[RMDB]
RNA sequence: GGGAACGACUCGAGUAGAGUCGAAAAAGCCUGGUCGAUACGUCGACCAGGCAAUGCCGCCACAACGGCUUCCUGGCGUGGCGGAUCUCAUCCAAUGGAGCAACGCUCCGGAUACGUCCCGAGCGAAAAAAGCUCUGCUUCUUCGGAAGCAGAGCAACGUUUCUAGAAUCUUCGGAUUCUAGAAACGAAAAGAAACAACAACAACAAC
Reactivity to 2A3 in 0.01 (KOAc 150mM, MgCl2 10mM, bicine 150mM(pH8.5), 24C), signal-to-noise 2, nucleotides 027 to 156: a000g300c010c000u000g000g000u000c000g000a010u020a090c170g080u000c010g000a000c000c000a000g000g020c030a000a000u000g000c000c000g000c010c000a010c000a020a010c030g080g000c000u140u070c000c020u010g000g030c030g000u020g000g030c010g010g010a010u030c020u040c030a090u080c060c050a090a210u200g010g000a010g000c040a050a090c040g000c000u010c020c040g000g000a030u050a030c110g060u020c000c040c040g010a010g000c020g170a180a000a040a040a000a000g000c000u000c000u000g000c010u000u010c000u030u070c140g100g000a010a010g000c000a000g010a010g030c000a000a000